[RMDB]
RNA sequence: GGGAACGACUCGAGUAGAGUCGAAAAGCGAAACUCAGGGAAUCGCUGUGUAUCAUCCUGCCCGUCGGAGGAGCCACAGUUAAAUUCAAAAGACAAGGCUAUGCAUGUAGAGCUAAAGGCAGAGGACUUGCGGACGCGGGUUCGAUUCCCGCCGCCUACUGUAAAAUAAGUUCGCUUAUUUUACAGUAAAAGAAACAACAACAACAAC
Reactivity to 2A3 in 0.01 (KOAc 150mM, MgCl2 10mM, bicine 150mM(pH8.5), 24C), signal-to-noise 8, nucleotides 027 to 156: g030c010g030a080a020a020c040u050c090a080g010g030g060a020a060u040c030g000c020u010g020u020g010u050a110u110c040a090u020c020c010u030g080c010c020c010g110u070c090g010g030a020g010g020a010g020c020c000a030c010a020g040u070u120a040a100a110u200u110c080a080a070a030a000g050a040c030a040a030g020g000c020u050a040u100g020c020a010u100g030u130a040g020a020g070c030u080a080a040a040g030g000c020a010g020a040g000g030a040c030u050u080g020c050g020g010a030c030g000c010g020g000g000u030u060c010g000a000u040u030c000c000c000g010c010c010g000c000c010u010
Reactivity to DMS in 0.01 (KOAc 150mM, MgCl2 10mM, bicine 150mM(pH8.5), 24C), signal-to-noise 4, nucleotides 027 to 156: g030c020g010a050a070a090c040u000c050a160g020g020g010a140a150u010c040g010c010u010g010u010g010u010a100u000c050a080u000c020c020u010g010c010c030c100g020u000c060g020g020a090g010g010a090g000c070c020a050c050a080g000u000u000a050a070a120u000u000c060a060a080a100a090g010a040c040a050a050g020g000c030u000a050u010g020c000a080u000g020u000a060g010a130g000c040u000a030a080a100g020g020c020a090g000a160g010g010a050c060u000u000g000c040g000g010a080c050g030c010g010g000g010u010u000c070g000a300u000u000c010c000c010g020c010c040g010c040c030u000